An RNA of 177 nucleotides, treated with 2A3 and DMS and read out base by base. The reactions ran in a buffer of 150 mM KOAc, 10 mM MgCl2 and 150 mM bicine (pH 8.5), at 24 C.
[RMDB]
RNA sequence: GGGAACGACUCGAGUAGAGUCGAAAAGCACCUCACCAGGCCCGGACGCGCGGAGGACCGACAGCCGGGCGCGCUUUCGCGAUCGCGCGGGCGGUGGUGCAUGGCCGCUCCCAGCCCGUGGCGCGAGAACUCGUUUCCUAUUCGUAGGAAACGAGUUAAAAGAAACAACAACAACAAC
Reactivity to 2A3 in 0.01 (KOAc 150mM, MgCl2 10mM, bicine 150mM(pH8.5), 24C), signal-to-noise 1, nucleotides 027 to 126: g030c020a050c030c010u040c010a090c040c040a060g110g010c000c000c000g020g050a110c020g130c030g010c020g090g030a120g100g190a290c000c010g050a080c040a010g040c010c000g000g000g000c000g010c000g000c010u060u110u040c010g010c000g030a090u050c070g010c000g000c000g150g010g000c020g020g000u100g000g020u020g010c000a060u110g110g010c040c020g000c010u030c000c000c000a010g000c000c000c010g020u040g020g020c010g000c000g000a020g020
Reactivity to DMS in 0.01 (KOAc 150mM, MgCl2 10mM, bicine 150mM(pH8.5), 24C), signal-to-noise 4, nucleotides 027 to 126: g000c030a080c020c020u010c050a110c100c110a180g030g010c000c000c000g020g020a100c140g000c100g000c020g000g000a240g020g010a120c040c000g000a080c050a140g000c020c000g020g020g000c020g010c080g010c060u010u030u010c000g010c000g000a230u010c050g010c000g000c010g010g000g000c010g020g000u000g020g010u000g000c020a080u030g020g000c080c050g000c070u000c080c010c010a210g010c000c000c000g020u020g030g000c010g010c020g000a030g020
Overview:
It was measured as part of the RMDB libraries RFM100 and RFMREP. Reactivities are given for positions 27 through 126.